[RMDB]
RNA sequence: GGGAACGACUCGAGUAGAGUCGAAAAGCAAGGCCAGUGGAGGCGACCUGCUGUGGGGCGGCGUGCCUCAGUACUCCAGCCUGUGGGGGCCGCCGAGCGGAGAGGACGCCCGCGUGAUCGGGAGCCCAUAACCCGAAGGGUUCGCCCUUCGGGUUAUAAAAGAAACAACAACAACAAC
Reactivity to DMS in 0.01 (KOAc 150mM, MgCl2 10mM, bicine 150mM(pH8.5), 24C), signal-to-noise 3, nucleotides 027 to 126: g000c060a090a120g010g010c030c050a080g020u000g020g000a110g030g010c020g000a070c060c020u010g010c030u000g020u000g000g010g010g030c010g000g000c050g020u010g010c010c010u000c010a050g000u010a090c090u010c100c080a130g010c150c030u000g010u000g000g000g000g010g020c020c030g000c010c010g000a240g000c010g020g000a110g000a090g000g000a180c050g010c040c010c040g010c050g010u000g000a070u000c040g000g000g010a120g010c010c010c020
Reactivity to 2A3 in 0.01 (KOAc 150mM, MgCl2 10mM, bicine 150mM(pH8.5), 24C), signal-to-noise 2, nucleotides 027 to 126: g030c030a070a050g050g030c040c040a040g010u110g060g110a160g080g010c000g050a040c000c000u000g020c020u020g010u050g050g150g020g000c010g000g040c060g080u200g240c000c010u040c010a000g000u060a070c050u030c030c010a050g000c060c000u050g010u050g010g010g010g040g010c000c000g030c000c000g000a020g010c010g030g020a190g020a020g160g000a020c010g050c010c020c010g000c010g080u090g010a010u050c010g040g040g060a040g020c000c010c010

An RNA of 177 nucleotides, treated with DMS and 2A3 and read out base by base. The 2A3 profile rests on 1,817 reads. For 2A3 the reverse transcriptase was SuperScript II with manganese. Values cover nucleotides 27 to 126.